[RMDB]
This 177-nucleotide RNA was probed chemically with DMS and 2A3. Reactivities are rounded to 0.1 and cut off at 0 and 3. For DMS the reverse transcriptase was MarathonRT. DMS (dimethyl sulfate) methylates the pairing face of unpaired adenines and cytosines. The reactions ran in a buffer of 150 mM KOAc, 10 mM MgCl2 and 150 mM bicine (pH 8.5), at 24 C. 2A3 adducts were read by reverse transcription with SuperScript II with manganese.
RNA sequence: GGGAACGACUCGAGUAGAGUCGAAAAGCUCCUCAUGUCAGACGAAGACUGAAGCUCACCUAGUCUGAGCCGGAAAUCUGCGAUUCUCCUAUGACGCCUAGUCAGGGAUUUCGCUUGAUGAUGGCCCGAUGCGGGUGCAAUUCGUUGCACCCGCAUCAAAAGAAACAACAACAACAAC
Reactivity to DMS in 0.01 (KOAc 150mM, MgCl2 10mM, bicine 150mM(pH8.5), 24C), signal-to-noise 1, nucleotides 027 to 126: g000c000u030c090c040u000c030a030u080g000u020c020a070g020a010c150g040a070a070g000a050c120u000g000a110a030g040c010u000c180a300c020c050u010a230g050u000c070u000g040a190g010c010c000g000g000a000a070a010u000c000u000g010c000g010a000u000u000c200u000c000c000u000a100u040g000a010c000g070c300c100u060a150g000u000c020a030g000g020g010a010u010u010u030c070g010c040u000u000g000a010u010g000a300u070g000g000c000c000c120
Reactivity to 2A3 in 0.01 (KOAc 150mM, MgCl2 10mM, bicine 150mM(pH8.5), 24C), signal-to-noise 3, nucleotides 027 to 126: g010c010u060c040c040u060c050a100u180g040u060c030a040g030a210c110g100a180a010g020a020c020u110g040a030a000g000c010u010c030a090c010c010u010a070g030u040c070u080g030a000g020c000c000g000g010a050a170a000u000c000u000g000c000g000a000u050u020c100u090c240c010u170a300u220g020a000c020g040c020c190u100a030g000u000c000a000g020g000g020a020u000u010u000c000g000c020u060u170g000a010u000g000a020u040g000g000c000c000c000